The data come from the RNA Mapping Database (RMDB), library OK1LIB. An RNA of 177 nucleotides, treated with 2A3 and read out base by base. For 2A3 the reverse transcriptase was SuperScript II with manganese. The RNA was probed in 150 mM KOAc, 10 mM MgCl2 and 150 mM bicine (pH 8.5) at 24 C.

[RMDB]
RNA sequence: GGGAACGACUCGAGUAGAGUCGAAAACAAGCACGCAGUCCUCGUGCCUGAAUUCAACAAUGAGCACUUAGAAUUGAUACCAGUGCUAGCAGGCUUAUUCACAUAUGAGGCUGCGAACAAAACAAAAGCGUAACGUCUGCUUCGGCAGACGUUACGCAAAAGAAACAACAACAACAAC
Reactivity to 2A3 in 0.01 (KOAc 150mM, MgCl2 10mM, bicine 150mM(pH8.5), 24C), signal-to-noise 1, nucleotides 027 to 126: c050a000a060g080c050a050c000g000c000a000g000u200c010c000u000c000g120u090g000c000c030u110g140a140a160u300u000c060a180a000c070a270a000u300g070a050g010c000a000c000u000u120a110g150a230a170u100u160g030a050u170a070c070c070a000g000u000g050c000u000a000g000c000a000g000g000c000u230u000a120u300u160c080a240c000a000u220a000u300g000a000g000g090c000u000g000c030g000a000a000c000a070a000a050a000c090a030a030a030a030